[RMDB]
RNA sequence: GGGAACGACUCGAGUAGAGUCGAAAAUAGUAGAUAGGGGUGGAAGAUGACAGCUUUCCCGCAGCCCACCCUGUUUAGUGGUUUACCACGAUUAAUGUCAUCAAAAUAAAAUGGGACCCAAAACAAACAUUGGUAUUUGUUUCGACAAAUACCAAUGAAAAGAAACAACAACAACAAC
Reactivity to 2A3 in 0.01 (KOAc 150mM, MgCl2 10mM, bicine 150mM(pH8.5), 24C), signal-to-noise 2, nucleotides 027 to 126: u050a000g140u010a040g010a140u010a040g000g020g030g000u000g030g010a070a050g030a050u020g010a000c020a000g010c010u020u060u070c010c040c000g040c040a000g010c000c000c000a000c000c010c000u000g000u030u000u010a050g000u020g140g030u070u210u180a190c020c010a010c000g010a000u010u130a070a010u040g010u000c000a000u000c000a010a060a000a060u140a020a060a010a040u130g000g050g000a010c060c010c060a010a020a080a050c120a020a150a010
Reactivity to DMS in 0.01 (KOAc 150mM, MgCl2 10mM, bicine 150mM(pH8.5), 24C), signal-to-noise 3, nucleotides 027 to 126: u000a130g000u030a100g010a120u010a040g050g010g010g030u010g010g000a210a090g010a030u000g010a010c000a040g020c020u000u000u000c000c010c020g010c300a020g010c020c000c010a010c000c000c010u000g010u010u000u010a110g020u020g010g000u020u000u010a120c020c000a010c020g010a060u000u010a020a070u010g020u000c000a030u000c000a140a100a080a060u010a020a060a050a070u010g010g010g000a090c020c040c050a060a060a050a060c190a110a090a170
About this RNA: This 177-nucleotide RNA was probed chemically with 2A3 and DMS. The DMS profile rests on 2,250 reads. For 2A3 the reverse transcriptase was SuperScript II with manganese. The reactions ran in a buffer of 150 mM KOAc, 10 mM MgCl2 and 150 mM bicine (pH 8.5), at 24 C. The data come from the RNA Mapping Database (RMDB), library M2PK90. For DMS the reverse transcriptase was MarathonRT.